Record summary: This 207-nucleotide RNA was probed chemically with DMS and 2A3. The 2A3 profile rests on 1,642 reads.

[RMDB]
RNA sequence: GGGAACGACUCGAGUAGAGUCGAAAAUCACUGUGGAUAUUUGGGUUUGCAUUUUAUUCAGUGAGUUAUAAUCUGUUACUGUCCUUAUGGAUUCCGGUGCUCUAGUGCUCUUGUCCCAGAUUUGGCUACUGAGAGCUCCUUCAGGCUGAUUCCAUCAACUGGACGAAUAAUUCGUUAUUCGUCCAGUAAAAGAAACAACAACAACAAC
Reactivity to DMS in 0.01 (KOAc 150mM, MgCl2 10mM, bicine 150mM(pH8.5), 24C), signal-to-noise 1, nucleotides 027 to 156: u000c020a030c060u020g090u010g020g010a060u000a000u020u000u030g010g030g010u000u010u010g050c020a070u000u000u000u000a050u010u020c020a040g010u010g000a090g010u000u010a140u000a070a060u010c020u000g000u010u000a060c060u000g010u000c010c020u000u000a030u000g050g010a130u000u000c050c050g050g050u010g010c040u000c030u000a040g040u000g010c010u000c020u000u000g010u000c060c010c040a080g010a200u000u010u000g030g000c070u010a070c040u000g000a030g010a100g000c020u000c040c080u010u000c060a070g040g000c000u020g010a140u010u000c000c000a060u000c060a150
Reactivity to 2A3 in 0.01 (KOAc 150mM, MgCl2 10mM, bicine 150mM(pH8.5), 24C), signal-to-noise 3, nucleotides 027 to 156: u060c010a020c050u050g040u070g100g030a070u040a120u140u060u080g100g030g030u120u110u110g030c030a060u060u060u140u140a090u100u070c010a020g010u030g050a040g010u070u080a120u040a110a100u050c060u060g070u070u070a090c030u040g040u090c010c000u090u070a070u140g040g020a000u060u070c060c040g040g030u050g040c010u000c020u040a020g010u020g010c010u010c010u090u070g020u040c020c010c000a020g000a040u080u080u130g050g010c060u150a040c020u080g080a010g000a020g060c000u010c010c000u030u080c020a040g000g050c020u040g010a080u050u020c060c010a030u150c040a060
DMS adducts were read by reverse transcription with MarathonRT. For DMS, 3,430 sequencing reads were counted. For 2A3 the reverse transcriptase was SuperScript II with manganese.